[RMDB]
RNA sequence: GGGAACGACUCGAGUAGAGUCGAAAACUAUGUACAGACAGUACAGUGGAUAAGGUCUUUUGAUAUCCAACUGUAACAAUGGUACUUGCAGUGGUAUCUAUCAAGAUAGGCAGGCUAUCAUAGAAAGAAGAUGGGUAUUAUUCGUAGUACCCAUCUUAAAAGAAACAACAACAACAAC
Reactivity to 2A3 in 0.01 (KOAc 150mM, MgCl2 10mM, bicine 150mM(pH8.5), 24C), signal-to-noise 9, nucleotides 027 to 126: c030u040a060u130g060u060a050c050a120g130a020c030a050g080u010a010c000a010g010u010g040g020a030u020a080a090g150g040u080c060u030u090u080u060g070a050u010a020u050c010c020a070a120c030u000g000u000a080a040c040a050a090u120g060g010u060a050c000u010u020g010c020a060g030u090g080g040u050a020u010c010u010a130u080c060a070a040g010a060u020a020g030g040c050a010g050g000c020u020a000u040c010a020u050a050g110a030a110a010g130
Reactivity to DMS in 0.01 (KOAc 150mM, MgCl2 10mM, bicine 150mM(pH8.5), 24C), signal-to-noise 9, nucleotides 027 to 126: c030u010a050u020g010u010a060c110a110g000a120c200a140g000u000a010c010a010g020u000g000g000a020u000a050a090g020g020u020c050u010u010u020u010g010a090u000a010u000c000c010a030a090c020u000g010u000a030a050c110a070a090u010g000g010u000a030c030u000u000g000c020a100g020u020g020g020u000a000u000c010u000a100u050c230a080a040g000a020u010a020g010g000c040a030g010g000c190u000a010u000c010a030u010a080g010a080a100a070g000
The data come from the RNA Mapping Database (RMDB), library OK1LIB.
The record gives the reactivity of an RNA of 177 nucleotides to 2A3 and DMS.
For 2A3, 26,261 sequencing reads were counted.
For 2A3 the reverse transcriptase was SuperScript II with manganese.
The RNA was probed in 150 mM KOAc, 10 mM MgCl2 and 150 mM bicine (pH 8.5) at 24 C.
Reactivities are given for positions 27 through 126.
The DMS profile rests on 91,542 reads.